[RMDB]
RNA sequence: GGGAACGACUCGAGUAGAGUCGAAAAGACAAGCAAGAAAGGAUCUAUCGCAUAGAAUUUUACAAAAACAACGCAUUUAGCGGGAUGAUCUUGGUGAAAUUUGUGUAGGAAUGGUAAAUCCAUUGCCACAGAAGCAGAAAUUCGUUUCUGCUUCUGUAAAAGAAACAACAACAACAAC
Reactivity to DMS in 0.01 (KOAc 150mM, MgCl2 10mM, bicine 150mM(pH8.5), 24C), signal-to-noise 6, nucleotides 027 to 126: g010a130c130a090a110g010c030a040a050g010a120a110a100g010g000a010u000c030u000a060u000c030g010c020a050u000a090g010a010a030u000u000u010u000a040c040a020a030a050a070a090c070a090a100c040g000c020a120u010u020u010a130g020c000g000g010g010a110u000g000a070u000c090u000u000g010g020u010g020a010a030a030u000u000u000g010u000g010u010a300g010g000a120a030u010g020g010u000a030a040a030u000c000c010a090u000u000g010c020c120
Reactivity to 2A3 in 0.01 (KOAc 150mM, MgCl2 10mM, bicine 150mM(pH8.5), 24C), signal-to-noise 2, nucleotides 027 to 126: g050a030c050a020a030g000c010a050a000g050a210a190a030g040g000a000u010c020u050a030u030c050g000c040a020u020a090g200a070a030u030u020u030u050a030c000a010a090a010a030a010c030a060a010c010g030c020a020u160u270u210a030g000c000g010g020g030a020u050g010a020u010c020u060u060g060g000u050g030a010a020a030u040u030u030g040u020g020u040a060g150g000a170a070u160g000g000u050a040a040a030u030c010c010a010u000u040g050c020c000
Structure probing data (DMS and 2A3) for a 177-nucleotide construct. It was measured as part of the RMDB library OK2TST.